Structure probing data (2A3) for a 177-nucleotide construct.
For 2A3 the reverse transcriptase was SuperScript II with manganese.
[RMDB]
RNA sequence: GGGAACGACUCGAGUAGAGUCGAAAAGAAAGAAAGAGACUGCCCUCAAGGAGCUUACAAUCUAGCUGGGGCUAAAAGACUUGCACACAAACACAACUAGACUGUGAGCUUCUAGAGGGCAGGGAAACGUGCUGCCGUAAUUCGUUACGGCAGCACGAAAAGAAACAACAACAACAAC
Reactivity to 2A3 in 0.01 (KOAc 150mM, MgCl2 10mM, bicine 150mM(pH8.5), 24C), signal-to-noise 1, nucleotides 027 to 126: g020a040a060a000g160a010a200a000g110a000g000a000c020u000g000c030c030c000u000c040a040a020g000g010a020g000c000u000u000a000c000a000a040u000c000u000a000g030c040u040g000g000g030g110c030u040a000a000a250a000g190a030c080u120u150g000c210a000c020a000c120a250a250a000c080a040c000a050a090c030u000a000g000a000c000u000g000u000g000a000g000c030u000u000c000u000a000g000a000g000g000g000c000a010g000g000g000a000a000a000
The RNA was probed in 150 mM KOAc, 10 mM MgCl2 and 150 mM bicine (pH 8.5) at 24 C. It was measured as part of the RMDB library RFM100.